About this RNA: Structure probing data (DMS and 2A3) for a 177-nucleotide construct. As a SHAPE reagent, 2A3 marks flexible, mostly unpaired nucleotides at the ribose 2'-OH. Reactivities are given for positions 27 through 126.

RNA sequence: GGGAACGACUCGAGUAGAGUCGAAAAUUAUGGAUGACCUAGAUGCAUUUCCAAAGUACCUGGCAUCAUGCAUCGAAUGGUGCGCGGUAUCACUAUUGAUGCAAUCAUGCAGAGACGCUGCUCAGCCACUGCAUACUUAGUUCGCUAAGUAUGCAGUAAAAGAAACAACAACAACAAC
Reactivity to DMS in 0.01 (KOAc 150mM, MgCl2 10mM, bicine 150mM(pH8.5), 24C), signal-to-noise 7, nucleotides 027 to 126: u040u030a090u020g000g010a060u010g000a120c060c030u010a070g010a060u010g000c020a040u000u000u010c060c060a050a090a110g020u010a060c060c020u010g000g010c030a030u020c140a100u000g000c040a020u010c070g010a050a030u010g010g010u000g010c100g020c090g010g010u010a050u010c030a030c050u020a060u000u000g000a020u010g000c000a040a120u020c120a040u000g010c030a040g000a130g000a050c060g000c020u000g000c030u000c050a100g010c110c080
Reactivity to 2A3 in 0.01 (KOAc 150mM, MgCl2 10mM, bicine 150mM(pH8.5), 24C), signal-to-noise 9, nucleotides 027 to 126: u160u090a090u130g090g020a040u050g070a110c030c050u080a080g020a110u100g020c030a040u040u070u050c030c020a090a070a030g050u050a070c010c010u030g090g000c020a020u020c010a000u060g020c000a060u040c070g110a060a030u060g010g010u010g000c150g010c070g060g040u120a080u170c010a000c030u050a050u050u060g020a020u010g010c010a020a160u070c030a040u110g020c020a010g040a000g010a110c040g030c060u050g000c010u010c040a030g030c020c020
Source information
For 2A3, 19,380 sequencing reads were counted. 2A3 adducts were read by reverse transcription with SuperScript II with manganese. It was measured as part of the RMDB library OK1LIB. The reactions ran in a buffer of 150 mM KOAc, 10 mM MgCl2 and 150 mM bicine (pH 8.5), at 24 C.